An RNA of 177 nucleotides, treated with 2A3 and DMS and read out base by base. The data come from the RNA Mapping Database (RMDB), library OK2TST. The RNA was probed in 150 mM KOAc, 10 mM MgCl2 and 150 mM bicine (pH 8.5) at 24 C. For DMS the reverse transcriptase was MarathonRT. For 2A3 the reverse transcriptase was SuperScript II with manganese. Values cover nucleotides 27 to 126.
[RMDB]
RNA sequence: GGGAACGACUCGAGUAGAGUCGAAAAAUCAAGCUGAACAGGUGGACGGCAUGGAUACGGCGAAGGGUUUCCUUAAAACAGCCUUUGGUGAAGAUGCUAGUGCGCGUAUCUUGCGUACGGCGGUGCCAUACCAGAAGAUCUUCGGAUCUUCUGGUAUAAAAGAAACAACAACAACAAC
Reactivity to 2A3 in 0.01 (KOAc 150mM, MgCl2 10mM, bicine 150mM(pH8.5), 24C), signal-to-noise 3, nucleotides 027 to 126: a010u060c030a040a000g040c030u060g040a070a000c020a060g040g070u050g020g070a010c020g000g050c020a030u060g040g000a050u040a130c040g020g000c040g040a040a030g010g010g020u010u060u070c000c000u040u120a060a130a060a030c030a040g050c020c000u050u060u060g090g020u080g030a060a040g050a070u140g000c000u110a130g000u020g010c010g000c000g030u100a110u290c140u120u200g030c010g000u010a020c020g010g000c040g030g000u030g030c010c000
Reactivity to DMS in 0.01 (KOAc 150mM, MgCl2 10mM, bicine 150mM(pH8.5), 24C), signal-to-noise 5, nucleotides 027 to 126: a070u010c080a090a110g030c030u000g010a080a080c100a080g010g010u000g020g000a120c090g010g010c060a050u010g010g010a070u000a070c090g000g000c030g010a070a050g000g010g010u000u000u000c040c020u000u010a060a040a070a110c140a080g000c040c030u000u010u000g010g010u000g010a080a090g000a080u020g010c020u000a080g030u000g000c020g010c010g010u010a080u010c210u010u010g020c000g010u000a010c020g000g010c010g000g010u000g010c070c060